[RMDB]
RNA sequence: GGGAACGACUCGAGUAGAGUCGAAAAGGUGACUCUGAAACCAUCAAUCCAAGGGUGGCACACCUCAUUCGGGACAUCACAGAUGAGAAGGAAUCGGAGAUGUUUGUCACCAAAUUUGCCACUGCAACCGAUAAAUGCGGUUCGCCGCAUUUAUCGGAAAAGAAACAACAACAACAAC
Reactivity to 2A3 in 0.01 (KOAc 150mM, MgCl2 10mM, bicine 150mM(pH8.5), 24C), signal-to-noise 1, nucleotides 027 to 126: g000g020u000g020a000c000u000c050u130g010a040a000a030c030c030a040u040c000a060a070u030c010c010a150a190g090g000g010u050g030g000c070a020c000a070c170c020u030c040a090u130u210c100g040g020g030a010c000a000u020c010a020c030a070g090a010u130g020a070g020a290a120g070g000a020a010u050c000g060g030a010g020a020u110g070u050u120u160g050u010c000a000c000c000a000a000a030u090u110u070g050c020c000a070c030u120g010c040a060a140
Reactivity to DMS in 0.01 (KOAc 150mM, MgCl2 10mM, bicine 150mM(pH8.5), 24C), signal-to-noise 2, nucleotides 027 to 126: g030g070u000g020a090c010u000c040u000g010a040a170a230c030c020a040u010c000a120a110u000c010c010a170a130g000g020g000u000g000g010c130a220c030a190c040c060u060c270a120u020u000c230g000g000g010a220c040a040u000c010a080c030a120g000a060u000g070a120g030a150a180g040g000a040a180u000c080g020g000a050g000a090u020g010u000u020u020g000u000c000a000c010c000a010a090a100u000u010u000g000c030c080a120c130u000g000c100a110a080
Background:
The record gives the reactivity of an RNA of 177 nucleotides to 2A3 and DMS. For 2A3 the reverse transcriptase was SuperScript II with manganese. The DMS profile rests on 867 reads. High 2A3 reactivity points to a flexible backbone, as in loops and unpaired stretches. It was measured as part of the RMDB library OK2TRN.